The record gives the reactivity of an RNA of 177 nucleotides to 2A3 and DMS.

RNA sequence: GGGAACGACUCGAGUAGAGUCGAAAAGCGCGCAGCUCGAGGGAGAGAUGGAGGAGGAAUUGAACAAGAGUCUGCGCUCGUUCGGCGUCGAUCCUGCAUCCGGGCGGCUGAGCGACGCGGCGUACACCGGCUUAAAAGGUUUCGACCUUUUAAGCCGAAAAGAAACAACAACAACAAC
Reactivity to 2A3 in 0.01 (KOAc 150mM, MgCl2 10mM, bicine 150mM(pH8.5), 24C), signal-to-noise 2, nucleotides 027 to 126: g070c030g030c000g010c040a030g020c020u050c030g010a040g020g010g020a100g010a020g000a050u160g020g070a060g040g040a030g020g060a100a120u110u080g040a120a030c020a080a050g070a030g110u070c040u070g000c000g000c020u000c000g000u030u030c040g030g020c000g040u130c010g060a120u050c010c000u040g040c050a070u060c070c020g000g090g030c060g040g000c030u040g030a010g020c010g000a010c000g010c010g000g030c000g000u060a010c040a020c070
Reactivity to DMS in 0.01 (KOAc 150mM, MgCl2 10mM, bicine 150mM(pH8.5), 24C), signal-to-noise 2, nucleotides 027 to 126: g040c070g020c090g030c060a080g020c030u000c080g010a160g030g020g000a100g000a080g000a100u020g010g000a050g000g010a100g000g010a070a130u000u000g000a110a090c200a110a210g020a110g020u000c020u010g020c020g020c160u000c040g020u000u010c000g040g030c020g010u030c040g010a100u010c000c030u000g010c080a100u000c130c040g050g000g000c070g000g050c040u000g000a040g040c010g000a030c070g010c030g000g000c030g000u010a080c200a080c120

2A3 adducts were read by reverse transcription with SuperScript II with manganese. DMS adducts were read by reverse transcription with MarathonRT.